[RMDB]
RNA sequence: GGGAACGACUCGAGUAGAGUCGAAAAGGAGAUCGAAGACGACCGACGUCAGCACGGUCUGGAUGUAGGUCCGCAUGCAUCCUAGUUGACGAAACUUCACGAUUUCCAAAGCGGACAAGAAGUCAAACACCGUAGGGACGUUCGCGUCCCUACGGUGAAAAGAAACAACAACAACAAC
Reactivity to DMS in 0.01 (KOAc 150mM, MgCl2 10mM, bicine 150mM(pH8.5), 24C), signal-to-noise 1, nucleotides 027 to 126: g000g000a000g000a070u000c000g000a280a170g010a150c120g000a010c100c030g000a300c000g000u000c120a070g030c090a240c020g000g000u000c010u020g000g000a000u000g060u000a020g020g000u010c000c000g010c050a030u030g050c010a000u000c000c020u000a050g030u000u000g010a220c090g000a140a000a070c050u000u000c000a070c220g030a110u000u000u000c000c000a090a110a040g000c020g060g000a000c000a070a070g030a030a120g000u000c000a190a130a110
Reactivity to 2A3 in 0.01 (KOAc 150mM, MgCl2 10mM, bicine 150mM(pH8.5), 24C), signal-to-noise 2, nucleotides 027 to 126: g050g000a020g000a000u040c040g000a000a010g070a040c180g080a060c010c050g010a040c000g090u220c110a040g030c110a030c040g070g000u010c020u060g000g040a010u000g000u000a010g020g030u000c000c010g000c000a000u010g000c000a050u000c000c000u010a040g020u020u100g010a070c010g030a100a080a090c020u050u010c000a040c040g010a020u000u000u000c000c000a010a070a040g010c010g000g000a000c000a000a130g130a120a020g120u140c040a000a160a000
Chemical mapping of a 177-nucleotide RNA with DMS and 2A3. 2A3 adducts were read by reverse transcription with SuperScript II with manganese. The RNA was probed in 150 mM KOAc, 10 mM MgCl2 and 150 mM bicine (pH 8.5) at 24 C. For DMS the reverse transcriptase was MarathonRT. For DMS, 1,203 sequencing reads were counted. In probing experiments dimethyl sulfate is read out at A N1 and C N3, which are open when not base-paired.